An RNA of 207 nucleotides, treated with DMS and read out base by base. The reactions ran in a buffer of 150 mM KOAc, 10 mM MgCl2 and 150 mM bicine (pH 8.5), at 24 C. For DMS, 2,991 sequencing reads were counted. The data come from the RNA Mapping Database (RMDB), library ARCHII. Reactivities are given for positions 27 through 156.
[RMDB]
RNA sequence: GGGAACGACUCGAGUAGAGUCGAAAAGGUGGCCGGGUCCCAUACAAUAGCUCUCUUGACGAAUCCCGCUAGGUCCGGAAGGAAGCAACGGCACUCGAGGGACUAUGUGAUAUGGGGUGCUCGGCCACUUUUUAAAACUUCGCACUUCGGUGCGAAGGUAUCGUAUCAAGUUCGCUUGAUACGAUACAAAAGAAACAACAACAACAAC
Reactivity to DMS in 0.01 (KOAc 150mM, MgCl2 10mM, bicine 150mM(pH8.5), 24C), signal-to-noise 1, nucleotides 027 to 156: g000g020u000g000g000c010c020g040g000g000u000c000c000c000a090u000a070c000a080a040u000a030g000c020u000c020u000c010u010u010g080a130c050g010a150a170u000c190c000c020g000c030u000a290g020g000u000c010c010g000g020a210a250g060g000a030a090g000c020a050a060c010g010g060c100a120c030u000c000g000a170g000g010g010a070c020u010a000u000g000u020g030a120u000a030u000g000g000g010g000u010g020c010u000c000g020g030c020c010a000c000u000u020u010u020u010a000a060a060a250c010u000u010c000g010c010a010c020u000u000c250g030g020u000g000c000g000a010a000g010